[RMDB]
RNA sequence: GGGAACGACUCGAGUAGAGUCGAAAAAGUUGAUUAAGCACUGAAAGUUGUGCAGUGGAUAGAACACAAGUAGUUUGAGUUUGACAGUGAAGGGUGGAAUCCAGAUUACUUGUAUUGACAAGUAAAGGAGAAAUGAGGUGCUGGAAAUACAGAAUUAGCUACGUGAUUUAUUCGUAAAUCACGUAGCAAAAGAAACAACAACAACAAC
Reactivity to 2A3 in 0.01 (KOAc 150mM, MgCl2 10mM, bicine 150mM(pH8.5), 24C), signal-to-noise 3, nucleotides 027 to 156: a010g080u050u070g030a130u050u110a080a020g070c010a010c040u040g060a110a120a060g020u030u020g010u040g040c020a000g010u010g010g020a080u050a110g070a080a010c050a010c020a100a030g050u070a040g010u110u040u030g060a050g020u030u030u080g060a020c030a030g010u010g070a060a010g080g000g030u060g000g000a040a010u020c000c020a040g020a140u000u040a000c000u000u010g010u040a180u100u200g140a010c010a020a000g000u010a020a040a030g010g000a070g030a060a040a080u110g010a010g030g000u020g000c010u000g000g040a030a060a000u150a070c060a000g170a100a130u290u260a080
Reactivity to DMS in 0.01 (KOAc 150mM, MgCl2 10mM, bicine 150mM(pH8.5), 24C), signal-to-noise 2, nucleotides 027 to 156: a120g040u000u000g000a120u010u000a090a120g030c040a070c040u020g010a050a110a090g040u000u000g020u000g010c030a190g010u000g020g020a120u000a060g020a050a040c070a120c040a070a060g010u000a020g020u010u000u010g010a100g000u000u000u020g030a080c050a100g020u000g030a090a100g040g000g010u000g010g010a070a090u000c000c030a090g020a170u000u000a020c010u000u020g000u000a230u000u010g000a040c000a010a060g010u010a000a020a090g020g000a050g000a090a080a090u010g010a100g030g030u000g000c010u020g010g000a060a080a090u000a160c060a100g010a070a090u000u010a110